RNA sequence: GGGAACGACUCGAGUAGAGUCGAAAAGAAAGAAAGAAUGAACUCUGUAAAGUGAGGGAUUGCCUGGACCAGGUCGGCGGGCCUGCUCCAGUUUCCUUCGCUCUGCUCAACGGGCAGACCGCCACAAAAAACGCGUGGCUGUUCGCAGCCACGCGAACCGUAAUUAAGCGUUCGCGCUUAAUUACGGAAAAGAAACAACAACAACAAC
Reactivity to 2A3 in 0.01 (KOAc 150mM, MgCl2 10mM, bicine 150mM(pH8.5), 24C), signal-to-noise 1, nucleotides 027 to 156: g060a030a080a020g060a020a070a030g060a020a030u110g010a070a000c030u040c030u080g030u210a110a120a010g040u030g020a000g000g000g020a020u020u130g110c030c000u020g000g000a000c010c010a000g020g000u030c060g020g100c000g030g000g010c000c000u000g020c010u000c000c000a000g010u010u020u000c000c000u010u020c020g020c000u070c000u010g000c020u020c040a050a130c060g000g030g060c000a040g030a150c020c020g000c040c000a030c040a030a180a000a020a010a000c010g010c010g020u000g000g000c000u010g020u040u130c230g010c050a020g000c000c000a010c000g010c000g000a010a000